[RMDB]
RNA sequence: GGGAACGACUCGAGUAGAGUCGAAAAUAACGGAACUCCUUCAUGACGGCUUUUUUUCGUUAAGAAAAUUAGGGGACCCUCUAUUAUCAACCGUUGUAGAUACAUUAAUACAAGGUUGCCCCACAACCGGCUACGUACCUUCUUCAUAUUAUCCGCAACUCAUAUAGUGCUUCGGCACUAUAUGAGUAAAAGAAACAACAACAACAAC
Reactivity to 2A3 in 0.01 (KOAc 150mM, MgCl2 10mM, bicine 150mM(pH8.5), 24C), signal-to-noise 1, nucleotides 027 to 156: u030a030a020c060g000g080a090a100c000u010c000c050u080u030c060a070u120g020a000c000g000g040c000u180u080u040u000u070u120u200c020g000u080u100a130a040g040a010a120a050a060u240u190a040g050g000g000g030a040c070c050c000u040c040u090a180u230u060a060u200c020a000a000c020c040g150u050u020g020u040a010g010a120u140a070c140a060u110u300a090a070u010a050c020a040a010g010g000u000u010g000c070c000c000c000a050c010a020a020c000c040g010g010c050u030a040c030g040u060a040c010c010u080u150c000u090u060c080a110u120a140u210u140a090u100c020c020g000c020a020
The record gives the reactivity of an RNA of 207 nucleotides to 2A3. As a SHAPE reagent, 2A3 marks flexible, mostly unpaired nucleotides at the ribose 2'-OH.